RNA sequence: GGGAACGACUCGAGUAGAGUCGAAAAGAUAUGGAGCAUGGACUUCUUGGAUUUAUAGCACACUAAGUACCGUCGGAAACGACGGUACUUAGAAAUGCUAUUGUCAGAAGGCCAUGCUCCUAAGUCACUAACUACGUCGGUUCGCCGACGUAGUUAGAAAAGAAACAACAACAACAAC
Reactivity to DMS in 0.01 (KOAc 150mM, MgCl2 10mM, bicine 150mM(pH8.5), 24C), signal-to-noise 1, nucleotides 027 to 126: g030a070u000a300u000g000g010a000g000c010a000u000g010g030a070c000u000u010c020u000u030g100g000a030u000u020u010a020u000a000g010c020a100c300a300c000u000a000a020g000u000a000c000c000g000u000c000g000g030a080a080a270c000g000a000c010g000g000u000a000c000u000u000a010g000a020a220a160u000g020c010u000a000u000u000g000u000c000a030g030a040a000g010g000c030c000a000u000g010c000u000c010c000u010a000a120g000u000c070a300